Structure probing data (2A3) for a 207-nucleotide construct.
[RMDB]
RNA sequence: GGGAACGACUCGAGUAGAGUCGAAAAACGAAGUAGCAAAGUACUUCAUCAAAUGUGCAAACUCUAGAAGUGAACACCUAUGUCAUCUUAAAUUGCAAAAACUCUGUUAUUACGCUCAAGCAUGGCAGUUGGCUUUCUUUGGUGAGCCUAUGUUUGAAUGCUCUCCCAAAUUCGUUUGGGAGAGCAUAAAAGAAACAACAACAACAAC
Reactivity to 2A3 in 0.01 (KOAc 150mM, MgCl2 10mM, bicine 150mM(pH8.5), 24C), signal-to-noise 2, nucleotides 027 to 156: a000c020g000a020a020g030u020a010g100c150a140a000a090g070u020a040c010u040u000c010a060u080c020a000a170a140u170g020u000g060c010a040a140a090c020u000c000u170a070g010a070a010g070u050g070a060a060c000a030c000c030u100a090u110g020u080c020a010u010c000u090u100a160a180a140u160u110g020c030a000a000a000a000a200c070u140c100u090g090u100u070a050u210u060a040c030g000c010u080c060a010a080g030c070a050u000g020g030c020a090g010u070u020g020g000c030u070u140u000c080u140u120u230g050g000u020g000a010g000c000c000u080a060u070g010u010u030u060g030a050